[RMDB]
RNA sequence: GGGAACGACUCGAGUAGAGUCGAAAAGGACUGGGCAGUCCGGCAACAUCAGCAGAGAGCCCGCUAUACGUGACGGAUUGGCUGAAGCGUACAGAAAUAUUGAGCCUCCUGCAAGAGGCAGCCAAGCAAAACGUACGUGAGUUCGCUCACGUACGAAGUUAGCUUAACAGUUCGCUGUUAAGCUAACAAAAGAAACAACAACAACAAC
Reactivity to DMS in 0.01 (KOAc 150mM, MgCl2 10mM, bicine 150mM(pH8.5), 24C), signal-to-noise 2, nucleotides 027 to 156: g010g020a080c020u010g010g040g050c030a130g020u000c030c000g000g030c050a060a100c010a080u040c030a080g050c020a090g010a120g030a140g040c000c030c020g000c010u010a100u000a040c070g010u000g010a230c050g020g000a240u000u000g020g010c020u000g010a060a300g020c000g010u020a170c030a040g000a030a060a150u010a230u030u010g000a140g030c010c030u000c020c010u000g020c110a080a080g000a070g050g020c020a020g000c040c020a040a080g000c120a050a040a070a090c000g020u000a000c010g000u000g000a030g020u000u000c300g060c030u020c000a000c020g000u010a020c020g000a010a080
Reactivity to 2A3 in 0.01 (KOAc 150mM, MgCl2 10mM, bicine 150mM(pH8.5), 24C), signal-to-noise 4, nucleotides 027 to 156: g020g010a010c050u060g020g020g010c020a040g050u000c020c000g030g000c020a060a060c000a170u140c050a020g040c050a010g050a010g000a030g100c020c040c010g000c010u090a110u020a040c060g020u050g040a020c030g040g050a130u040u050g010g020c020u020g030a080a010g020c010g010u030a040c020a020g100a070a160a030u250a120u180u190g040a030g010c000c010u010c010c040u120g080c070a100a030g000a000g030g000c000a000g000c010c010a020a000g000c030a030a050a020a050c010g000u000a000c000g000u000g010a000g000u040u110c200g010c090u010c000a000c000g000u010a000c000g000a000a000

Conditions: 150 mM KOAc, 10 mM MgCl2 and 150 mM bicine (pH 8.5), 24 C. An RNA of 207 nucleotides, treated with DMS and 2A3 and read out base by base. High DMS reactivity at an A or C suggests that its Watson-Crick edge is free.